[RMDB]
RNA sequence: GGGAACGACUCGAGUAGAGUCGAAAACUUGAGGCGUCUUCAGGCCAAGUACAAUGUCGCACUGAUCUGCACCAAUCAGGCAACGACUAUGAUUGAUGACGCAGCAUCGAGUGAUACUCUCGGCGACCGGUAUCGCACGUUUCGACGUGCGAUACCGAAAAGAAACAACAACAACAAC
Reactivity to 2A3 in 0.01 (KOAc 150mM, MgCl2 10mM, bicine 150mM(pH8.5), 24C), signal-to-noise 1, nucleotides 027 to 126: c000u000u020g050a010g000g020c000g000u010c050u130u070c040a040g070g040c070c020a000a020g040u020a070c120a120a130u190g010u010c030g010c070a060c180u040g010a050u000c000u080g020c000a020c040c020a050a000u040c010a000g000g050c010a050a120c040g130a070c010u100a140u240g000a080u000u060g030a020u070g030a020c030g000c030a030g060c000a060u030c010g030a010g020u000g040a040u020a120c040u080c030u080c040g000g010c030g070a100c020
Reactivity to DMS in 0.01 (KOAc 150mM, MgCl2 10mM, bicine 150mM(pH8.5), 24C), signal-to-noise 1, nucleotides 027 to 126: c010u000u010g010a060g000g000c020g010u000c040u000u000c010a090g000g000c080c090a080a140g020u030a060c170a130a150u030g030u000c040g040c060a190c040u000g000a070u000c030u000g010c070a110c060c050a130a000u000c000a060g010g000c090a190a080c120g000a030c000u010a130u000g000a130u030u000g000a030u000g020a040c100g010c030a010g060c120a060u000c040g000a040g030u000g000a130u000a150c120u000c010u000c040g000g010c040g010a080c120

This 177-nucleotide RNA was probed chemically with 2A3 and DMS. DMS adducts were read by reverse transcription with MarathonRT. Source: RMDB library OK2TRN, as collected in RNAgym.